[RMDB]
An RNA of 207 nucleotides, treated with DMS and 2A3 and read out base by base. The DMS profile rests on 11,000 reads. For 2A3, 2,271 sequencing reads were counted. The RNA was probed in 150 mM KOAc, 10 mM MgCl2 and 150 mM bicine (pH 8.5) at 24 C. DMS adducts were read by reverse transcription with MarathonRT. 2A3 adducts were read by reverse transcription with SuperScript II with manganese.

RNA sequence: GGGAACGACUCGAGUAGAGUCGAAAAGGUAUCUAAUCUGCAUGUGUAAAUAACCAGCUCUAAGGAGGAUGUGAUAUACCACCCAGUGUGAGGACUGCUGGGUAUGGCAGUGGUUCUUACACUGAAGCAUGCACUGGAGUCACUUGGAGGCUUAUUACUAUAGGCUAAAUUUCGAUUUAGCCUAUAGAAAAGAAACAACAACAACAAC
Reactivity to DMS in 0.01 (KOAc 150mM, MgCl2 10mM, bicine 150mM(pH8.5), 24C), signal-to-noise 3, nucleotides 027 to 156: g020g040u000a060u000c030u010a070a090u010c030u000g020c010a040u010g030u010g020u010a060a070a130u000a050a120c030c030a120g020c040u000c030u000a110a120g020g010a130g030g020a080u000g020u010g020a150u000a110u000a090c040c000a130c030c010c010a050g010u000g020u010g010a020g030g010a030c020u000g020c000u000g010g020g030u000a020u000g020g000c000a030g000u000g010g020u010u010c040u000u030a030c010a000c000u000g010a050a120g010c020a050u010g010c010a030c030u000g010g010a120g020u010c050a070c040u010u010g010g000a150g020g020c040u000u010a040u010u000a180
Reactivity to 2A3 in 0.01 (KOAc 150mM, MgCl2 10mM, bicine 150mM(pH8.5), 24C), signal-to-noise 4, nucleotides 027 to 156: g050g000u070a030u060c110u120a060a080u020c010u040g010c030a020u070g060u040g040u200a060a100a070u130a080a080c050c020a020g040c020u030c020u080a130a120g080g010a020g010g020a040u040g060u070g080a080u070a020u030a180c020c000a010c000c000c000a000g010u000g000u000g010a000g010g000a000c000u000g040c000u020g010g100g150u150a120u140g100g000c010a000g000u000g000g000u010u000c000u000u000a000c000a000c000u000g000a000a000g030c010a000u070g020c010a010c030u020g020g020a050g080u050c010a020c150u070u070g060g010a020g020g000c040u070u070a020u060u090a200